[RMDB]
RNA sequence: GGGAACGACUCGAGUAGAGUCGAAAAAUGCAUUUCUUCGAAGGCGACAUCACGAUCAACAAGGAGUGGGUCGAGUAUCACGUGAAGAAGUGCGACGUGAUCCUGCCGCUCGUCGCGAUCGCGACGAAGUGGAGGUCACCUUCGGGUGACCUCCACUAAAAGAAACAACAACAACAAC
Reactivity to DMS in 0.01 (KOAc 150mM, MgCl2 10mM, bicine 150mM(pH8.5), 24C), signal-to-noise 1, nucleotides 027 to 126: a030u000g020c030a040u000u010u000c030u010u000c000g000a140a160g010g060c040g050a020c060a060u020c000a120c010g000a070u010c060a060a080c170a200a120g010g070a160g000u000g000g000g020u000c020g000a090g020u020a120u000c060a080c080g030u050g010a030a040g000a040a020g010u000g000c000g030a040c160g010u010g000a080u010c000c000u000g030c080c070g030c120u020c010g040u010c020g020c020g020a120u000c180g000c000g020a080c000g000a010
Reactivity to 2A3 in 0.01 (KOAc 150mM, MgCl2 10mM, bicine 150mM(pH8.5), 24C), signal-to-noise 2, nucleotides 027 to 126: a000u120g000c000a000u030u000u000c020u000u020c010g050a130a030g080g030c030g050a020c010a210u090c020a040c030g120a130u160c020a050a190c000a080a190g190g000a090g080u010g030g000g050u000c010g000a010g000u080a100u160c110a000c090g160u220g020a000a030g020a000a030g000u040g040c010g000a030c070g030u030g020a050u010c020c010u010g080c010c030g040c030u030c010g000u010c030g000c030g160a300u240c230g000c020g000a000c000g010a040